RNA sequence: GGGAACGACUCGAGUAGAGUCGAAAAGAUAUGGACUCGAACUACGAAACCAAGGUCGAAGAACGUAACAACGUGUCGGAAACGACACGUUGUUACGGGAGACUCAAAGUUCGCGAGUCCUAAGUCAGUGAAGAUAACUGUUCGCAGUUAUCUUCACAAAAGAAACAACAACAACAAC
Reactivity to DMS in 0.01 (KOAc 150mM, MgCl2 10mM, bicine 150mM(pH8.5), 24C), signal-to-noise 2, nucleotides 027 to 126: g000a060u000a300u020g030g000a010c010u000c020g000a120a110c150u020a300c030g000a020a030a020c010c070a190a300g000g000u000c000g000a090a140g010a180a300c000g000u000a000a000c000a010a000c010g010u000g000u010c000g000g000a080a110a270c000g000a020c010a000c030g000u010u000g000u010u000a000c000g000g000g010a070g000a000c000u000c060a040a180a240g020u010u000c000g000c000g000a050g000u000c000c000u000a000a110g010u010c090a220
Reactivity to 2A3 in 0.01 (KOAc 150mM, MgCl2 10mM, bicine 150mM(pH8.5), 24C), signal-to-noise 2, nucleotides 027 to 126: g070a040u110a070u250g000g010a000c010u000c010g030a220a120c130u180a080c300g110a180a050a040c050c030a110a110g010g000u010c010g080a190a030g030a090a010c000g000u020a030a000c000a030a000c000g020u000g010u000c040g050g120a060a070a060c030g000a000c000a000c000g020u020u000g000u000u010a010c020g010g020g000a000g020a000c020u060c300a110a090a000g000u000u010c010g040c000g040a000g000u000c010c000u010a070a050g080u020c100a010